This 177-nucleotide RNA was probed chemically with 2A3 and DMS.

RNA sequence: GGGAACGACUCGAGUAGAGUCGAAAAGUAAAGCGCGAGGGCUGGUGAGGAUUUGGAGGCGUGAGAGUGAUUGUAGGGAUCCUGCCUCCUCCCUCUCCGCGCGGCGCCUCCUAGCCGAUAUAAAAAAGAAACAAACUUGUUUCGACAAGUUUGUUUCAAAAGAAACAACAACAACAAC
Reactivity to 2A3 in 0.01 (KOAc 150mM, MgCl2 10mM, bicine 150mM(pH8.5), 24C), signal-to-noise 3, nucleotides 027 to 126: g020u040a010a080a080g040c030g010c040g040a270g030g200g000c090u170g040g030u020g010a000g000g030a050u270u110u200g010g000a000g010g000c040g010u120g080a170g000a000g030u300g040a050u040u060g100u150a170g060g120g000a000u000c000c000u010g020c000c000u000c000c000u000c010c000c010u000c000u000c000c000g030c010g010c010g030g000c000g010c010c010u010c020c000u050a070g020c020c040g070a020u030a010u180a190a150a010a010a000a020
Reactivity to DMS in 0.01 (KOAc 150mM, MgCl2 10mM, bicine 150mM(pH8.5), 24C), signal-to-noise 2, nucleotides 027 to 126: g020u010a050a140a180g010c020g010c030g010a100g000g010g020c040u010g030g000u010g000a030g010g020a090u000u010u010g000g000a020g010g010c020g010u020g010a130g010a110g000u020g000a040u010u010g020u000a140g020g000g000a040u000c010c000u000g000c010c010u010c010c000u000c140c000c000u010c000u000c010c000g010c040g000c060g000g000c050g020c030c020u000c010c000u010a070g010c120c060g010a120u000a060u030a030a010a100a050a090a100
It was measured as part of the RMDB library M2PK90. Conditions: 150 mM KOAc, 10 mM MgCl2 and 150 mM bicine (pH 8.5), 24 C. For 2A3, 3,438 sequencing reads were counted.